Structure probing data (DMS and 2A3) for a 177-nucleotide construct. The DMS profile rests on 2,159 reads. 2A3 adducts were read by reverse transcription with SuperScript II with manganese. It was measured as part of the RMDB library TTRINS.
RNA sequence: GGGAACGACUCGAGUAGAGUCGAAAAGAUAUGGAAUCUACAAAGAGCUUGGAUUUAUGGGUCACAGUUUGGGUCGGAAACGACCCAAAUCACAGCCCAUUGUCAGCUCAUAAAGGAUUCCUAAGUCCAUUAUUCCAAUCUUCGGAUUGGAAUAAUGAAAAGAAACAACAACAACAAC
Reactivity to DMS in 0.01 (KOAc 150mM, MgCl2 10mM, bicine 150mM(pH8.5), 24C), signal-to-noise 3, nucleotides 027 to 126: g020a140u010a300u010g010g000a030a030u000c000u000a080c150a110a200a220g010a010g010c010u020u010g050g010a000u000u000u000a000u000g010g000g010u000c030a150c300a150g010u000u020u000g000g000g030u000c010g010g000a100a150a300c010g000a020c000c000c000a000a000a000u010c030a180c300a300g000c010c000c010a030u000u000g000u010c010a050g000c000u000c000a020u000a070a180a210g000g000a020u000u000c000c000u000a070a130g000u000c050
Reactivity to 2A3 in 0.01 (KOAc 150mM, MgCl2 10mM, bicine 150mM(pH8.5), 24C), signal-to-noise 2, nucleotides 027 to 126: g020a010u120a090u280g000g010a010a000u020c040u070a140c130a120a300a100g000a000g030c100u300u300g150g000a090u300u300u220a020u100g060g000g000u170c030a050c050a080g000u000u000u000g010g020g000u020c010g030g050a110a090a000c000g000a000c000c000c000a000a000a010u030c010a030c010a010g020c010c010c010a010u000u010g000u020c010a010g000c000u020c000a000u030a030a090a010g060g000a000u020u000c010c000u000a170a020g080u010c040